[RMDB]
RNA sequence: GGGAACGACUCGAGUAGAGUCGAAAACCUCGGGCAAAGGAAAAGACGUUCAAAACAAGUCACAGGGCAACAGAAAAUGGUAUUCUACGUUGUAUUUUCUAGCAAUACAACAAAUUUAUCAUACGAACUAGUAUAAAGCUUUCGAGCUUUAUACUAGAAAAGAAACAACAACAACAAC
Reactivity to DMS in 0.01 (KOAc 150mM, MgCl2 10mM, bicine 150mM(pH8.5), 24C), signal-to-noise 5, nucleotides 027 to 126: c010c000u010c050g010g000g000c050a030a050a090g010g010a050a070a100a050g010a080c070g000u010u030c130a080a050a080a090c140a060a130g010u000c020a030c050a040g000g000g000c050a090a040c100a090g010a030a070a110a030u000g000g000u000a010u010u000c080u010a090c210g010u000u000g000u010a010u000u010u010u010c150u030a090g000c160a030a010u000a010c000a000a010c010a060a110a070u020u010u010a010u010c010a020u010a090c180g010a100a150
Reactivity to 2A3 in 0.01 (KOAc 150mM, MgCl2 10mM, bicine 150mM(pH8.5), 24C), signal-to-noise 7, nucleotides 027 to 126: c000c010u010c030g030g010g020c040a070a040a040g040g050a080a110a030a050g050a020c040g030u060u060c110a050a070a090a080c050a100a040g020u020c020a010c020a050g030g040g000c010a060a020c020a100g110a070a080a010a020u020g000g010u020a030u050u050c090u100a060c110g000u000u000g010u000a010u000u060u020u060c080u040a040g080c070a010a000u000a000c000a000a000c000a000a010a000u010u020u000a030u040c010a010u020a110c070g060a090a040